[RMDB]
RNA sequence: GGGAACGACUCGAGUAGAGUCGAAAAUUCGCCGCGCGGGAUUCCGGUGCCGCUGCUGCCGGCGCGCUGAACCUCGAUAUCCUGGCCGAACACGCCGCCGGCCUAGACCCCGGGGUCGCUCGACUGGUAAAGUGAAUAUAUUCGUAUAUUCACUUUAAAAAGAAACAACAACAACAAC
Reactivity to DMS in 0.01 (KOAc 150mM, MgCl2 10mM, bicine 150mM(pH8.5), 24C), signal-to-noise 9, nucleotides 027 to 126: u010u010c040g010c010c030g010c060g020c080g000g000g010a080u010u010c050c030g010g010u010g010c040c030g020c100u020g000c110u010g020c030c020g010g000c020g000c120g010c040u000g010a090a130c110c030u010c060g010a100u030a100u010c040c020u010g000g000c040c020g010a080a080c070a110c100g020c040c020g010c050c020g010g000c010c050u010a070g000a130c070c080c030c010g010g000g000g010u000c020g010c030u000c030g010a090c050u020g010g010
Reactivity to 2A3 in 0.01 (KOAc 150mM, MgCl2 10mM, bicine 150mM(pH8.5), 24C), signal-to-noise 9, nucleotides 027 to 126: u040u020c030g030c050c010g010c010g010c020g020g050g030a060u080u040c010c010g010g030u040g030c020c030g100c090u090g010c040u050g010c010c000g010g000c010g000c020g000c010u020g020a040a040c020c020u040c030g040a050u040a070u200c030c040u040g060g000c020c010g030a070a020c040a010c100g030c020c000g000c000c000g010g000c000c000u030a040g030a050c020c000c000c010g010g000g000g010u010c010g040c020u050c010g090a120c050u100g040g040
Chemical mapping of a 177-nucleotide RNA with DMS and 2A3. The reactions ran in a buffer of 150 mM KOAc, 10 mM MgCl2 and 150 mM bicine (pH 8.5), at 24 C. Values cover nucleotides 27 to 126.